[RMDB]
RNA sequence: GGGAACGACUCGAGUAGAGUCGAAAAACACUCGAGGAGUGGAAGGCGGGGAGGCGGGGUUCCCGGGCUUACCUACGGGAACUGCUGGUUUCCCCUUAUGUCCAGUCCCUCUCCCGUCCUGGUGAAGUAACGGGGUAGUUCGCUACCCCGAAAAGAAACAACAACAACAAC
Reactivity to DMS in 0.01 (KOAc 150mM, MgCl2 10mM, bicine 150mM(pH8.5), 24C), signal-to-noise 4, nucleotides 027 to 129: a040c100a050c080u020c050g000a040g040g000a100g030u020g000g000a000a000g010g060c300g070g030g030g000a030g000g000c010g010g010g030g000u000u060c000c000c000g000g000g000c070u030u060a090c210c000u060a070c050g090g010g010a010a070c000u040g070c000u060g040g020u010u020u010c020c000c000c030u000u070a000u070g000u060c010c000a090g000u020c030c030c010u010c010u010c040c010c030g000u020c080c020u050g020g030u050g000a060a050g000u030a100a110
Reactivity to 2A3 in 0.01 (KOAc 150mM, MgCl2 10mM, bicine 150mM(pH8.5), 24C), signal-to-noise 7, nucleotides 027 to 129: a000c050a040c030u050c030g050a040g030g010a040g020u040g030g040a030a020g030g020c040g000g010g000g020a000g010g020c010g010g010g000g000u010u000c000c000c000g010g000g010c060u110u150a140c010c030u040a080c010g000g000g020a000a010c010u150g280c020u070g100g070u010u030u030c010c010c010c020u020u140a080u040g040u000c010c000a030g050u010c010c000c000u000c000u000c010c000c000g030u050c000c010u010g030g010u040g020a080a030g020u080a150a020
An RNA of 170 nucleotides, treated with DMS and 2A3 and read out base by base. For 2A3 the reverse transcriptase was SuperScript II with manganese. For DMS the reverse transcriptase was MarathonRT. The DMS profile rests on 17,007 reads.